The data come from the RNA Mapping Database (RMDB), library OK2TST.
The record gives the reactivity of an RNA of 177 nucleotides to DMS.
The RNA was probed in 150 mM KOAc, 10 mM MgCl2 and 150 mM bicine (pH 8.5) at 24 C.

[RMDB]
RNA sequence: GGGAACGACUCGAGUAGAGUCGAAAAGACGAGCGGGCGUUUUACAAUGCAAACUCUUUGCGGGACUUGGCCGGCCUAGAACGCGCAUGACGGGCCGCAUCGCGUUCCGCGCGCCGCCCCGCCGCCAUCAGUCGCUACCAUUCGUGGUAGCGACUGAAAAAGAAACAACAACAACAAC
Reactivity to DMS in 0.01 (KOAc 150mM, MgCl2 10mM, bicine 150mM(pH8.5), 24C), signal-to-noise 1, nucleotides 027 to 126: g000a100c130g020a180g010c040g100g020g010c010g040u000u000u010u020a130c260a090a120u000g000c090a020a060a050c290u000c080u000u000u000g010c020g010g020g000a020c080u020u050g010g000c300c010g050g020c020c020u010a070g000a130a130c040g000c160g030c210a110u000g000a170c010g000g030g060c010c050g090c030a050u010c090g000c190g030u000u000c000c060g100c020g030c300g000c110c050g010c060c040c030c080g050c030c050g000c090c020a080

High DMS reactivity at an A or C suggests that its Watson-Crick edge is free.